An RNA of 170 nucleotides, treated with 2A3 and DMS and read out base by base. For 2A3, 40,173 sequencing reads were counted. 2A3 adducts were read by reverse transcription with SuperScript II with manganese. The data come from the RNA Mapping Database (RMDB), library 15KLIB. In probing experiments dimethyl sulfate is read out at A N1 and C N3, which are open when not base-paired. The reactions ran in a buffer of 150 mM KOAc, 10 mM MgCl2 and 150 mM bicine (pH 8.5), at 24 C.
[RMDB]
RNA sequence: GGGAACGACUCGAGUAGAGUCGAAAAUGCUACACGUCUAAGGACACUUUAGAUGAUAUCUUACAACAGGCUAAUAAGUCUGUUGGUAUUAUAUCUAUGCCUUUGGGAUAUGUGUCUCAUGGUUUAGUCAGGAUCUUGUUCGCAAGAUCCAAAAGAAACAACAACAACAAC
Reactivity to 2A3 in 0.01 (KOAc 150mM, MgCl2 10mM, bicine 150mM(pH8.5), 24C), signal-to-noise 9, nucleotides 027 to 129: u090g010c010u020a010c020a000c020g030u000c020u040a030a030g030g020a040c020a030c100u130u130u120a060g010a070u070g010a000u010a000u010c040u040u050a010c000a010a000c000a000g000g000c010u020a120a130u160a300a050g000u000c000u000g000u000u020g000g000u000a010u010u010a020u010a000u000c020u010a030u090g030c000c000u060u100u120g090g010g020a030u070a090u230g120u050g010u010c000u000c000a050u070g040g020u070u100u080a080g040u090c120a050
Reactivity to DMS in 0.01 (KOAc 150mM, MgCl2 10mM, bicine 150mM(pH8.5), 24C), signal-to-noise 4, nucleotides 027 to 129: u060g020c040u020a040c070a030c080g000u050c040u060a040a040g030g040a060c010a070c120u020u020u020a060g000a090u070g020a000u000a030u020c000u000u030a010c030a000a080c030a000g020g040c020u000a140a100u030a140a040g050u020c010u000g000u000u000g000g000u040a020u000u000a020u000a040u020c030u010a100u050g020c020c010u020u030u040g030g030g020a090u030a010u020g060u030g020u030c020u000c070a070u020g020g040u050u040u020a000g030u020c060a140